[RMDB]
RNA sequence: GGGAACGACUCGAGUAGAGUCGAAAAGUGAUCACGCCAUCCGAGACCCCGCGUGAUCACGAGUUUAGGGGUCAGGACAUGUUAUGCUGGCUAUACGUACGCACCUAAGGGCUGCGGGUGCGUACGAAUCUUACGCAGCCCACUGUUGCCAGCUAGAGAUAAUAUCACUAUUCGUAGUGAUAUUAUCAAAAGAAACAACAACAACAAC
Reactivity to DMS in 0.01 (KOAc 150mM, MgCl2 10mM, bicine 150mM(pH8.5), 24C), signal-to-noise 1, nucleotides 027 to 156: g020u010g000a010u000c010a000c000g020c020c090a100u010c040c040g030a200g000a120c010c000c020c090g000c000g020u000g000a010u010c010a010c000g000a080g030u000u010u000a080g010g010g080g020u000c030a150g000g000a190c080a100u030g020u000u000a070u030g030c010u010g000g030c060u000a130u000a170c010g000u010a020c040g020c020a050c000c000u000a010a050g000g040g010c060u000g020c050g000g000g040u000g010c000g000u000a010c020g030a030a050u010c140u000u000a120c160g030c000a070g020c000c000c000a140c130u000g030u010u010g020c020c060a140g010c000u010a030g000a300
Reactivity to 2A3 in 0.01 (KOAc 150mM, MgCl2 10mM, bicine 150mM(pH8.5), 24C), signal-to-noise 4, nucleotides 027 to 156: g010u000g000a000u000c000a000c010g020c070c040a130u110c100c090g080a080g070a150c000c000c030c040g000c000g000u000g000a000u000c010a000c000g000a010g010u100u110u130a090g010g010g000g030u000c020a010g040g050a040c050a080u160g040u280u200a070u130g070c040u020g020g020c040u090a030u030a230c020g000u000a000c000g000c000a000c000c000u020a070a200g010g000g000c000u000g000c010g010g010g000u000g000c000g000u000a000c000g000a000a000u040c010u040u070a030c110g000c000a000g000c020c000c000a010c010u010g010u020u010g020c050c020a020g010c040u020a030g010a000